[RMDB]
RNA sequence: GGGAACGACUCGAGUAGAGUCGAAAAAGGUGAUUUCUCCUGCACCUUUAUCAAUGGAGGAACUCGACUUUGCUGUGGGUCCCAAAGGGACCUUAGGUGCAGACGGUUACCGGCGGUGAAGUGUGAGCAUAGGUUCGUGUCUUCGGACACGAACCAAGUAACAACCUGACUUCGGUCAGGUUGUUACAAAAGAAACAACAACAACAAC
Reactivity to 2A3 in 0.01 (KOAc 150mM, MgCl2 10mM, bicine 150mM(pH8.5), 24C), signal-to-noise 1, nucleotides 027 to 156: a010g000g010u000g000a050u000u030u060c010u000c000c000u130g060c000a000c000c000u090u210u090a030u040c090a040a010u210g000g010a000g040g030a050a040c020u020c010g050a020c020u050u000u030g010c040u040g050u080g000g000g030u010c000c000c010a190a110a090g000g000g000a000c000c000u010u040a010g010g000u030g000c020a030g110a290c070g040g000u040u130a020c000c030g020g000c000g000g000u020g030a000a020g010u020g050u040g070a010g020c090a180u060a160g000g020u010u000c000g000u010g000u000c010u000u040c170g130g000a010c000a000c000g000a000a000c000c000a000a000